RNA sequence: GGGAACGACUCGAGUAGAGUCGAAAAGGAUACCACGCUUGUGGACCUUAUGCCCACACAGCCAUCCUCUAGUAAGUUUGUAAAAUGUCUGGUGAGAUGUGGGAACUUAUUGGAAACAACAAUUUGCAUUUUCCCGAUACUUCGGUAUCGGGAAAAUAAAAGAAACAACAACAACAAC
Reactivity to DMS in 0.01 (KOAc 150mM, MgCl2 10mM, bicine 150mM(pH8.5), 24C), signal-to-noise 2, nucleotides 027 to 126: g030g000a220u000a050c000c010a010c080g010c300u130u040g000u000g000g010a100c000c000u000u050a040u010g000c010c020c000a140c160a210c130a030g000c060c030a030u120c120c090u000c030u000a040g000u030a030a010g000u000u000u010g000u090a000a030a090a030u020g000u000c010u030g010g020u050g000a060g020a060u030g000u000g000g000g060a000a010c050u010u010a010u000u000g000g000a070a150a070c270a100a050c200a030a100u120u070u020g030c220
Reactivity to 2A3 in 0.01 (KOAc 150mM, MgCl2 10mM, bicine 150mM(pH8.5), 24C), signal-to-noise 3, nucleotides 027 to 126: g000g000a070u200a300c040c000a060c030g230c210u240u300g000u000g030g030a030c000c000u110u080a010u130g020c000c000c000a000c000a000c010a000g000c000c000a030u030c010c020u000c010u050a060g030u060a000a080g000u020u100u100g150u090a010a060a000a050u050g020u030c010u050g130g040u080g190a060g000a050u050g000u060g050g000g050a020a020c040u010u050a070u110u050g110g060a100a110a000c070a050a030c030a130a200u050u020u200g080c060
Chemical mapping of a 177-nucleotide RNA with DMS and 2A3. Source: RMDB library RFM100, as collected in RNAgym. For DMS the reverse transcriptase was MarathonRT. For 2A3, 1,040 sequencing reads were counted. Values cover nucleotides 27 to 126. For DMS, 1,474 sequencing reads were counted. 2A3 adducts were read by reverse transcription with SuperScript II with manganese.